[RMDB]
RNA sequence: GGGAACGACUCGAGUAGAGUCGAAAAGGGGUCGACUUGGAUUUCGACGGGAGCUAAAUAGCCUCGGUUGCAUGUCGGCAUGGGCACGCCGUAAAACUACCCGCAAUCAAUAAACGCAAACAACGCAAACUACGCUCCCGCUUACGCCAAAGCUGCGCAGUACCUGUUGGUUCGCCAACAGGUACUGAAAAGAAACAACAACAACAAC
Reactivity to 2A3 in 0.01 (KOAc 150mM, MgCl2 10mM, bicine 150mM(pH8.5), 24C), signal-to-noise 3, nucleotides 027 to 156: g030g010g020g020u060c040g010a070c030u040u000g030g010a060u090u060u040c060g060a090c000g020g010g000a000g010c010u080a070a100a100u120a130g020c010c010u050c070g000g000u030u010g030c050a040u100g080u180c010g000g000c030a060u090g010g010g000c010a010c080g010c020c010g060u130a030a030a000a060c030u080a090c020c010c030g000c020a010a060u100c050a000a060u090a150a130a040c090g040c070a080a090a080c040a030a040c090g040c060a130a040a030c030u050a040c050g000c000u020c000c000c000g040c000u040u050a050c060g000c000c020a150a080a060g040c090u050g030c090g000
Reactivity to DMS in 0.01 (KOAc 150mM, MgCl2 10mM, bicine 150mM(pH8.5), 24C), signal-to-noise 1, nucleotides 027 to 156: g000g010g020g030u010c030g020a100c050u030u050g000g010a200u000u000u000c010g010a120c000g010g010g000a020g030c030u000a030a060a210u010a100g000c040c000u010c050g000g000u000u000g020c040a130u000g010u000c000g010g020c010a090u030g030g000g010c010a060c060g010c000c010g020u010a010a090a050a030c030u010a060c000c010c020g030c040a020a030u010c040a040a260u020a010a100a010c000g020c010a060a080a120c030a170a050c000g000c010a030a100a030c030u020a060c060g000c000u000c020c000c000g010c030u000u000a090c020g010c020c030a000a050a140g010c010u000g020c030g000
This 207-nucleotide RNA was probed chemically with 2A3 and DMS.
The RNA was probed in 150 mM KOAc, 10 mM MgCl2 and 150 mM bicine (pH 8.5) at 24 C.
The 2A3 profile rests on 1,939 reads.